[RMDB]
RNA sequence: GGGAACGACUCGAGUAGAGUCGAAAAGAGACAACACCCGGACGUGGAUCUCCAGGUAGUCCUGCCCACGAACGAGCUCCGGCUCGACUGGAUGGCCAAAGCCCCGAAGGUAAGGCCAGAAAAGAUCGCUACGCCUCUGUUUCGACAGAGGCGUAGCAAAAGAAACAACAACAACAAC
Reactivity to 2A3 in 0.01 (KOAc 150mM, MgCl2 10mM, bicine 150mM(pH8.5), 24C), signal-to-noise 1, nucleotides 027 to 126: g000a000g000a060c000a030a040c080a140c050c000c050g000g020a070c000g020u080g000g180a110u040c000u000c030c000a000g000g200u130a190g070u120c000c000u000g060c000c000c000a080c030g060a130a000c030g030a000g000c000u120c150c180g020g100c000u000c100g000a000c030u070g170g120a150u000g000g000c000c000a000a300a000g000c000c000c000c110g130a250a110g000g010u160a080a170g000g000c000c000a000g000a020a060a000a000g020a020u160c030